[RMDB]
RNA sequence: GGGAACGACUCGAGUAGAGUCGAAAAAACUCAGCUAGGGAGAGUAUAACAUUCAUGUUGACGAGACCUAGACGAAACACAGAGGAAAAUUAUUAAUCACUGGAUAGUAUUAGUAAGGACUCUGUGUAAAACUCUUCUACGUUCGCGUAGAAGAGAACCUUUAAAGGGAGUUCGCUCCCUUUAAAGGAAAAGAAACAACAACAACAAC
Reactivity to 2A3 in 0.01 (KOAc 150mM, MgCl2 10mM, bicine 150mM(pH8.5), 24C), signal-to-noise 1, nucleotides 027 to 156: a000a000c020u030c010a000g010c020u000a000g000g000g010a040g000a020g080u120a140u080a300a010c040a020u160u220c060a030u230g070u040u030g050a030c050g030a000g070a040c000c000u000a010g020a020c040g000a000a020a000c000a000c000a000g010a010g010g020a020a160a150a000u000u000a000u010u000a000a000u010c040a010c000u020g090g050a100u220a300g020u020a000u000u020a000g010u000a040a000g000g030a000c000u020c000u000g000u000g000u000a000a000a000a000c000u000c000u000u010c000u000a000c000g020u000u040c120g000c000g050u000a000g010a000a000g000a000g000a000a000
Reactivity to DMS in 0.01 (KOAc 150mM, MgCl2 10mM, bicine 150mM(pH8.5), 24C), signal-to-noise 1, nucleotides 027 to 156: a150a070c050u000c000a080g000c020u010a000g000g010g000a200g020a230g010u000a050u000a050a030c000a070u000u000c120a100u000g000u000u010g030a160c040g010a240g070a020c020c000u010a060g020a300c040g000a130a110a080c020a000c000a050g000a040g010g000a080a090a140a140u000u010a010u000u000a030a020u000c130a040c010u000g010g000a180u020a170g030u000a020u010u020a010g000u000a040a040g000g000a120c000u000c000u010g030u000g000u000a000a020a080a110c010u000c000u040u000c000u000a010c000g060u020u020c300g000c080g040u000a010g000a030a000g000a000g020a020a030